[RMDB]
Chemical mapping of a 207-nucleotide RNA with 2A3 and DMS. For DMS the reverse transcriptase was MarathonRT. The DMS profile rests on 2,755 reads. Values are in units of 0.01, from 0 to 300, in steps of 10.

RNA sequence: GGGAACGACUCGAGUAGAGUCGAAAAGCGUACUACUAUAAAGGGAGCGAUGCCACCGUGGAGGAGUACCUCCCAAAUAGGAGGUACGCGAAACUCCACGGGAGCUAAUCGCUCCCGAUUGUAGUAUCGCAAACACUCCUCGUUCGCGAGGAGUGAAGCUAUUAGAGACGUUCGCGUCUCUAAUAGCAAAAGAAACAACAACAACAAC
Reactivity to 2A3 in 0.01 (KOAc 150mM, MgCl2 10mM, bicine 150mM(pH8.5), 24C), signal-to-noise 3, nucleotides 027 to 156: g010c000g000u000a000c000u010a000c000u010a000u090a230a300a070g000g000g000a000g000c010g000a010u040g010c010c040a090c000c010g010u000g000g020a020g030g030a110g000u060a010c020c060u110c000c070c050a180a190a040u300a050g000g000a000g000g000u010a020c000g010c010g000a010a000a010c000u010c010c010a010c010g000g000g000a000g040c040u130a020a050u010c020g000c000u020c000c000c000g000a010u000u000g000u000a000g010u010a020u190c010g000c010a020a050a000c020a010c000u000c000c000u010c000g020u020u040c210g020c030g120a000g010g000a010g000u000g000a040a000
Reactivity to DMS in 0.01 (KOAc 150mM, MgCl2 10mM, bicine 150mM(pH8.5), 24C), signal-to-noise 1, nucleotides 027 to 156: g030c000g020u000a010c010u000a000c020u010a090u000a080a110a180g040g010g010a070g010c000g000a050u010g000c000c050a100c000c000g010u030g000g010a030g000g000a230g030u010a040c010c000u000c000c010c010a010a130a210u010a040g000g030a010g060g020u000a000c020g000c120g020a120a060a230c020u000c000c000a060c010g000g000g010a040g000c020u010a130a090u000c060g030c010u000c000c000c020g030a000u000u000g000u000a020g010u000a020u000c030g020c010a110a050a100c020a080c000u000c000c010u010c000g020u000u020c300g040c010g000a010g030g010a000g010u020g000a090a200